[RMDB]
RNA sequence: GGGAACGACUCGAGUAGAGUCGAAAACGGCUAAAACCCGUAACGCGCAAACCCAAGCGUAUGAGCGCAAAACGGGGCGUGUUGUACAGGAGUUUGACGCUUAACAUGAUCUGUCAGGGAUCCCCGGGCUGGGAGUUGGUUUCGACCAGCUCUCGGUAAAAGAAACAACAACAACAAC
Reactivity to DMS in 0.01 (KOAc 150mM, MgCl2 10mM, bicine 150mM(pH8.5), 24C), signal-to-noise 9, nucleotides 027 to 126: c140g000g000c020u010a070a010a020a020c050c000c000g000u000a040a040c040g000c000g010c010a060a100a300c010c010c030a030a120g010c020g020u010a090u050g000a170g010c010g010c010a050a040a110a130c250g000g000g000g010c020g010u000g000u010u010g010u030a040c070a080g000g000a120g010u000u000u000g000a080c150g000c010u000u010a080a090c150a090u020g000a030u000c020u000g010u020c150a110g010g000g000a040u000c000c000c000c000g010g010
Reactivity to 2A3 in 0.01 (KOAc 150mM, MgCl2 10mM, bicine 150mM(pH8.5), 24C), signal-to-noise 9, nucleotides 027 to 126: c010g010g000c010u020a000a000a010a040c000c000c000g000u010a010a010c030g000c000g000c020a060a030a130c010c000c010a020a020g010c010g000u060a160u270g230a160g060c000g000c000a030a050a020a060c150g020g000g020g000c020g010u110g030u010u110g110u040a070c100a160g040g090a230g060u010u020u030g050a040c060g000c000u030u030a020a010c030a080u080g010a020u020c010u030g220u180c060a050g060g000g000a010u000c000c000c000c000g010g060

The data come from the RNA Mapping Database (RMDB), library OK1LIB. This 177-nucleotide RNA was probed chemically with DMS and 2A3. Conditions: 150 mM KOAc, 10 mM MgCl2 and 150 mM bicine (pH 8.5), 24 C. DMS adducts were read by reverse transcription with MarathonRT. For 2A3 the reverse transcriptase was SuperScript II with manganese.